[RMDB]
RNA sequence: GGGAACGACUCGAGUAGAGUCGAAAACGAAGAACAUGCCAAGCAGUAGGGAAGAAGAGAAAGUGACGGUACCUGCAGAAGAAGCGCCGACUAACAACGUAACAGCAGACGCAGCAAGGCAUGAAAAGAUAUACCACUGAUUCGUCAGUGGUAUAUCAAAAGAAACAACAACAACAAC
Reactivity to 2A3 in 0.01 (KOAc 150mM, MgCl2 10mM, bicine 150mM(pH8.5), 24C), signal-to-noise 9, nucleotides 027 to 126: c040g050a050a070g050a070a030c010a020u030g010c000c000a030a020g000c020a030g020u090a040g030g060g030a070a050g050a090a020g070a050g060a060a130a030g100u110g070a040c030g010g010u030a060c000c000u040g000c030a030g050a150a000g040a060a020g040c020g000c000c010g030a050c030u090a100a030c070a050a020c050g100u110a030a040c010a040g030c010a010g030a040c010g000c020a010g000c010a030a040g000g000c000a000u020g010a010a010a000a010
Reactivity to DMS in 0.01 (KOAc 150mM, MgCl2 10mM, bicine 150mM(pH8.5), 24C), signal-to-noise 8, nucleotides 027 to 126: c040g020a140a130g010a110a190c030a000u000g000c000c010a070a300g010c020a110g010u020a050g000g020g010a120a130g030a060a090g010a100g010a070a050a100g040u020g020a100c050g010g000u030a070c070c020u010g010c050a080g000a100a100g010a120a080g000c020g020c040c050g010a080c080u020a050a080c140a090a080c150g000u010a060a060c120a070g010c140a050g000a060c050g000c030a100g000c060a030a260g000g000c030a020u000g000a060a040a050a080